This 177-nucleotide RNA was probed chemically with 2A3 and DMS. For 2A3 the reverse transcriptase was SuperScript II with manganese. Conditions: 150 mM KOAc, 10 mM MgCl2 and 150 mM bicine (pH 8.5), 24 C. DMS adducts were read by reverse transcription with MarathonRT. It was measured as part of the RMDB library OK1LIB.
[RMDB]
RNA sequence: GGGAACGACUCGAGUAGAGUCGAAAAGGCGGGCGUGGGAGGUCAGUGGGCGAAAGCGGCUUUUAGCCGCGCCGUGUGAUUUCUAGGUGCCGAUAGGGAGAUAGCGGCGAGCUUAGGAACGUCAUAGGCGGCUUGGGUCGUUCGCGAUCUAAGCCGCAAAAGAAACAACAACAACAAC
Reactivity to 2A3 in 0.01 (KOAc 150mM, MgCl2 10mM, bicine 150mM(pH8.5), 24C), signal-to-noise 8, nucleotides 027 to 126: g060g010c070g020g030g020c070g030u190g020g040g010a200g040g010u070c040a020g020u230g070g010g000c090g070a070a070a000g010c000g030g000c030u110u150u110u250a020g000c010c000g000c000g000c020c010g050u100g020u040g030a170u010u040u000c010u050a030g020g010u070g080c000c000g010a030u100a060g080g030g000a130g020a080u120a040g050c000g000g000c030g020a060g010c010u010u000a010g020g010a030a030c030g030u030c060a050u070a120g050
Reactivity to DMS in 0.01 (KOAc 150mM, MgCl2 10mM, bicine 150mM(pH8.5), 24C), signal-to-noise 5, nucleotides 027 to 126: g000g000c100g000g000g000c140g020u030g000g010g000a110g000g000u000c050a020g010u050g010g000g020c110g010a040a080a110g010c010g010g000c000u000u010u020u030a060g030c010c010g010c010g000c090c070g000u020g010u000g000a130u000u000u000c010u000a030g000g020u010g010c000c000g010a090u010a050g010g010g010a090g000a160u040a090g000c010g000g000c020g000a130g000c020u010u000a040g000g000a040a030c090g010u020c080a060u020a080g000